[RMDB]
The record gives the reactivity of an RNA of 207 nucleotides to 2A3.
RNA sequence: GGGAACGACUCGAGUAGAGUCGAAAAGCGUACUACAUCUCGUGUCAAGACAUGCUCUUCAAAGUGCUAUCCCAAAUAGGAUAGCAAUGAAGAGAGCAACAGCUUGACAUACGAGAUGUAUCGCAAAUCUUGAAGAAUGUUCGCAUUCUUCAAGAAAGAGCUGGUUGAGAUUCGUCUCAACCAGCUCAAAAGAAACAACAACAACAAC
Reactivity to 2A3 in 0.01 (KOAc 150mM, MgCl2 10mM, bicine 150mM(pH8.5), 24C), signal-to-noise 1, nucleotides 027 to 156: g030c000g050u120a060c030u000a000c020a000u020c030u010c000g030u000g000u020c020a000a010g020a200c060a150u090g000c040u000c030u100u030c050a060a190a030g030u000g000c000u000a000u010c020c060c040a070a280a240u240a060g000g000a000u020a000g000c020a020a000u000g000a110a050g030a000g000a000g010c000a000a110c030a060g000c010u000u000g030a000c020a010u020a020c000g030a030g000a000u000g030u000a000u000c030g000c010a120a120a000u010c000u000u000g000a010a010g020a000a000u020g000u080u290c230g000c140a020u000u000c000u000u000c000a000a000g000a050a020a000

The RNA was probed in 150 mM KOAc, 10 mM MgCl2 and 150 mM bicine (pH 8.5) at 24 C. The 2A3 profile rests on 873 reads.